RNA sequence: GGGAACGACUCGAGUAGAGUCGAAAAGAUAUGGAGUAAUUGAGUCUAACUGCGUGGUCGGAAACGACCAUACGCAGUAAUCUCAAAUACUCCUAAGUCAAAACGUUAUAAGCUUCGGCUUAUAACGCAAUACUAGACACUUCGGUGUCUAGUAUUGAAAAGAAACAACAACAACAAC
Reactivity to 2A3 in 0.01 (KOAc 150mM, MgCl2 10mM, bicine 150mM(pH8.5), 24C), signal-to-noise 7, nucleotides 027 to 126: g010a000u020a010u080g000g000a000g000u010a020a060u010u010g010a000g030u040c230u300a190a110c010u090g000c000g010u010g000g000u000c000g000g000a060a020a010c010g000a000c000c030a010u030a020c030g000c020a000g000u010a020a110u030c000u000c000a000a000a010u000a000c000u000c000c000u010a050a000g020u010c020a020a030a090a150c020g000u010u000a010u000a010a000g000c020u030u200c300g090g000c010u030u040a000u010a010a000c000g000
Reactivity to DMS in 0.01 (KOAc 150mM, MgCl2 10mM, bicine 150mM(pH8.5), 24C), signal-to-noise 9, nucleotides 027 to 126: g000a020u000a180u010g000g000a020g020u000a010a080u000u000g000a030g010u000c200u000a150a100c000u000g010c000g040u000g000g010u000c000g010g000a030a040a080c000g010a010c000c000a030u010a020c080g020c000a010g010u000a030a060u010c000u000c000a010a010a090u000a010c000u000c000c000u000a000a070g000u000c010a120a080a110a300c020g010u000u000a000u000a000a000g000c000u000u010c280g030g020c000u000u000a000u000a000a000c000g010
The data come from the RNA Mapping Database (RMDB), library TTRDES. This 177-nucleotide RNA was probed chemically with 2A3 and DMS. Reactivities are rounded to 0.1 and cut off at 0 and 3. The RNA was probed in 150 mM KOAc, 10 mM MgCl2 and 150 mM bicine (pH 8.5) at 24 C. In probing experiments dimethyl sulfate is read out at A N1 and C N3, which are open when not base-paired.